[RMDB]
RNA sequence: GGGAACGACUCGAGUAGAGUCGAAAAUUGAGUUUUCAAUCGGCCAUACUGGGUUGGGUACUGUACCGUAGGGAAGAUCACGAUGAUUGGAGACUUUGGCUGCAAACUGCUGGUGUCACAGUGCAUGCUAGGUUAUAGACUUCGGUCUAUAACCUAGAAAAGAAACAACAACAACAAC
Reactivity to 2A3 in 0.01 (KOAc 150mM, MgCl2 10mM, bicine 150mM(pH8.5), 24C), signal-to-noise 4, nucleotides 027 to 126: u090u070g030a030g090u060u040u050u040c010a000a020u020c020g040g020c020c010a070u070a120c050u140g070g020g020u120u070g110g010g010u050a040c020u050g040u120a040c010c060g080u070a050g000g040g040a090a070g040a120u130c070a040c150g120a100u180g010a030u030u070g040g020a040g010a010c000u080u060u080g070g000c020u050g040c050a070a110a110c040u040g020c020u060g030g040u070g040u060c010a030c010a060g030u040g030c010a040u100g050
Reactivity to DMS in 0.01 (KOAc 150mM, MgCl2 10mM, bicine 150mM(pH8.5), 24C), signal-to-noise 7, nucleotides 027 to 126: u000u000g000a050g010u010u010u000u000c030a060a050u000c030g000g000c030c050a100u010a060c070u010g020g010g010u010u000g010g000g010u000a050c090u010g010u000a090c050c060g010u000a080g000g000g010a110a090g000a070u000c100a080c140g010a070u000g000a050u000u000g000g000a080g010a050c050u000u000u010g020g010c040u000g010c070a060a070a090c090u000g010c040u000g010g010u000g010u000c060a070c050a080g000u000g010c060a060u010g020